[RMDB]
Structure probing data (DMS and 2A3) for a 177-nucleotide construct. Source: RMDB library OK1LIB, as collected in RNAgym.
RNA sequence: GGGAACGACUCGAGUAGAGUCGAAAAGGCCGACUAUUACACCACCUUAGAACAAUACAUGGCAUAGGCAGCGGUAGUUUCCGCGUGAAAAGGGGGCGAGAGAACGAAGACUCAUUGCAAGGAGAUGUAAGGAUGAGGGUUUCGACCCUCAUCCUUAAAAAGAAACAACAACAACAAC
Reactivity to DMS in 0.01 (KOAc 150mM, MgCl2 10mM, bicine 150mM(pH8.5), 24C), signal-to-noise 3, nucleotides 027 to 126: g000g030c030c050g000a140c080u010a130u010u000a070c060a110c000c030a050c040c050u000u010a060g010a120a090c100a100a060u010a090c060a020u000g020g000c080a040u010a060g000g000c070a130g000c010g020g000u000a100g000u010u000u010c010c010g020c050g060u010g000a060a050a100a070g000g000g030g000g010c060g000a030g010a100g000a090a040c100g010a050a030g000a070c060u000c040a090u040u020g000c140a060a090g000g000a050g030a030u020g010
Reactivity to 2A3 in 0.01 (KOAc 150mM, MgCl2 10mM, bicine 150mM(pH8.5), 24C), signal-to-noise 1, nucleotides 027 to 126: g090g000c000c000g010a030c060u000a060u170u000a030c000a010c050c020a020c000c020u040u080a030g110a210a080c000a020a020u030a110c060a090u290g000g060c030a000u000a100g000g000c020a050g000c040g030g000u060a100g060u060u060u050c070c000g000c000g030u020g010a000a150a000a000g000g050g000g000g000c090g000a030g000a030g020a030a000c090g050a030a040g060a000c010u010c000a000u000u170g000c060a090a080g030g000a000g020a030u060g020
Annotation
The RNA was probed in 150 mM KOAc, 10 mM MgCl2 and 150 mM bicine (pH 8.5) at 24 C. For 2A3 the reverse transcriptase was SuperScript II with manganese. Reactivities are rounded to 0.1 and cut off at 0 and 3.